[RMDB]
The data come from the RNA Mapping Database (RMDB), library OK1LIB.
The record gives the reactivity of an RNA of 177 nucleotides to 2A3 and DMS.
The DMS profile rests on 1,345 reads.
RNA sequence: GGGAACGACUCGAGUAGAGUCGAAAAGAGUUCGAGACCAGCCUGAACAACAGGGAGAAACCCCGUCUCUACUAAAAAUACAAAAUUAGCAGGGCAUGGUGGCGCAUGCCUGUAAUCCCAGCUGCUCUAGGAUGCAGUCAUUCGUGACUGCAUCCUAAAAAGAAACAACAACAACAAC
Reactivity to 2A3 in 0.01 (KOAc 150mM, MgCl2 10mM, bicine 150mM(pH8.5), 24C), signal-to-noise 2, nucleotides 027 to 126: g070a000g000u020u200c030g010a010g030a040c040c030a020g110c020c030u060g040a100a070c050a070a000c010a100g040g100g000a090g110a100a060a110c000c000c000c010g000u000c000u000c000u010a050c030u040a010a120a030a020a100u200a060c160a080a100a030a130u090u040a070g010c050a020g030g000g000c030a000u030g010g040u070g040g000c040g030c000a010u030g030c010c000u000g000u010a000a010u010c040c030c010a010g000c060u010g000c000u000c040
Reactivity to DMS in 0.01 (KOAc 150mM, MgCl2 10mM, bicine 150mM(pH8.5), 24C), signal-to-noise 1, nucleotides 027 to 126: g000a150g000u000u000c030g000a070g040a080c160c010a020g000c030c020u060g000a060a110c180a050a090c020a000g000g000g000a100g000a050a130a250c000c000c000c050g000u000c000u000c000u000a000c040u000a000a000a070a090a150u070a140c220a000a060a120a030u000u010a090g010c200a130g000g000g000c070a020u000g000g010u000g040g000c100g000c100a070u000g000c030c000u000g010u020a020a110u000c000c000c000a020g000c040u000g020c050u110c150
For 2A3, 1,388 sequencing reads were counted.